[RMDB]
Background:
The record gives the reactivity of an RNA of 177 nucleotides to 2A3. The reactions ran in a buffer of 150 mM KOAc, 10 mM MgCl2 and 150 mM bicine (pH 8.5), at 24 C.
RNA sequence: GGGAACGACUCGAGUAGAGUCGAAAAUGGCGGUGAUCAAGUACAUGAGGUUGCUGCUGUAAGAAGUGUUACUGUCGAGUACAACAUUCAUGCUGUAUUAGACACACUACUUGCUUCUUCUAGUCUUCUACGCGAAAUAGUUCGCUAUUUCGCGUAGAAAAGAAACAACAACAACAAC
Reactivity to 2A3 in 0.01 (KOAc 150mM, MgCl2 10mM, bicine 150mM(pH8.5), 24C), signal-to-noise 2, nucleotides 027 to 126: u080g010g000c040g020g010u000g030a010u010c020a100a070g120u140a150c050a210u160g120a060g050g000u010u010g000c010u000g000c000u020g020u000a010a000g010a010a030g010u000g040u090u110a060c100u030g040u040c000g010a000g000u000a000c010a030a000c000a010u100u260c080a030u130g000c000u000g000u010a010u010u000a010g000a000c000a000c000a020c030u030a010c030u030u080g040c000u020u030c000u040u020c030u020a060g080u010c020u040u000
2A3 adducts were read by reverse transcription with SuperScript II with manganese. Reactivities are given for positions 27 through 126. It was measured as part of the RMDB library 15KREP. For 2A3, 1,791 sequencing reads were counted. Reactivities are rounded to 0.1 and cut off at 0 and 3.